[RMDB]
RNA sequence: GGGAACGACUCGAGUAGAGUCGAAAAACGGGCAGUGGCGAUGGCAACGCGGCAGCCGCAGGGUCGACUUCUUCGCAGCCGCAACAGACGGGGUACGGGCAAAGAGGGGCGCUCGUUCUGUUGGAAGCCCUAGGGUGACUUUCGAGUCACCCUAGGGAAAAGAAACAACAACAACAAC
Reactivity to 2A3 in 0.01 (KOAc 150mM, MgCl2 10mM, bicine 150mM(pH8.5), 24C), signal-to-noise 3, nucleotides 027 to 126: a010c060g010g010g000c030a060g020u070g060g000c100g040a060u070g040g000c050a070a030c070g010c010g040g000c010a010g010c030c020g000c050a050g040g000g030u080c020g060a060c010u070u020c010u070u040c120g010c020a010g030c010c010g010c000a000a040c020a030g060a020c060g000g010g000g030u090a080c050g020g000g000c040a010a120a010g060a030g010g000g010g010c050g000c030u000c010g030u050u030c000u050g050u050u010g040g020a090a060g050
Reactivity to DMS in 0.01 (KOAc 150mM, MgCl2 10mM, bicine 150mM(pH8.5), 24C), signal-to-noise 1, nucleotides 027 to 126: a300c230g000g050g020c020a030g010u020g000g000c070g000a160u000g000g040c060a180a150c170g000c080g030g010c090a100g000c040c030g010c090a060g000g000g080u000c120g000a150c120u000u060c040u000u030c000g020c020a140g030c000c100g030c000a060a130c100a100g000a060c000g010g010g000g000u000a050c120g020g000g000c050a020a030a130g000a100g030g000g000g000c150g000c000u000c020g020u000u030c020u000g000u020u000g000g000a040a040g000